Source information
The record gives the reactivity of an RNA of 177 nucleotides to DMS and 2A3. Values cover nucleotides 27 to 126. In probing experiments dimethyl sulfate is read out at A N1 and C N3, which are open when not base-paired. 2A3 is a SHAPE reagent: it acylates the 2'-hydroxyl of flexible nucleotides of all four kinds. The DMS profile rests on 1,178 reads. The reactions ran in a buffer of 150 mM KOAc, 10 mM MgCl2 and 150 mM bicine (pH 8.5), at 24 C.

[RMDB]
RNA sequence: GGGAACGACUCGAGUAGAGUCGAAAAGAUAUGGAUACCCAACUAGCAACAGCUCUAAUCGGAAACGAUUAGAGACAUGCUACUUGGUGUAUCCUAAGUCAAAUCGUAUGAGUUCGCUCAUACGAAAGUAUCAGCUUCUGUUCGCAGAAGCUGAUACAAAAGAAACAACAACAACAAC
Reactivity to DMS in 0.01 (KOAc 150mM, MgCl2 10mM, bicine 150mM(pH8.5), 24C), signal-to-noise 2, nucleotides 027 to 126: g000a060u000a300u010g010g010a000u000a000c010c000c000a000a000c150u010a000g000c020a020a050c300a260g000c020u000c000u000a000a000u000c010g000g020a150a030a200c030g020a020u000u000a000g000a020g000a040c080a180u010g030c000u000a000c150u000u000g020g000u050g000u000a000u010c000c010u000a040a070g000u000c040a060a120a180u000c000g000u020a000u010g000a050g000u000u000c270g000c010u000c010a000u000a000c010g020a000a010a060
Reactivity to 2A3 in 0.01 (KOAc 150mM, MgCl2 10mM, bicine 150mM(pH8.5), 24C), signal-to-noise 1, nucleotides 027 to 126: g020a040u140a040u170g010g010a000u000a030c000c000c000a000a000c010u020a000g000c010a000a180c050a280g010c000u000c000u000a010a010u020c020g000g080a120a090a090c000g000a000u000u000a000g000a010g030a010c000a010u000g000c020u010a000c020u000u000g020g060u180g010u110a010u010c000c010u000a060a000g070u030c040a050a010a160u050c000g000u000a010u000g000a010g090u050u140c300g010c110u000c000a000u000a010c000g020a030a020a020
DMS adducts were read by reverse transcription with MarathonRT.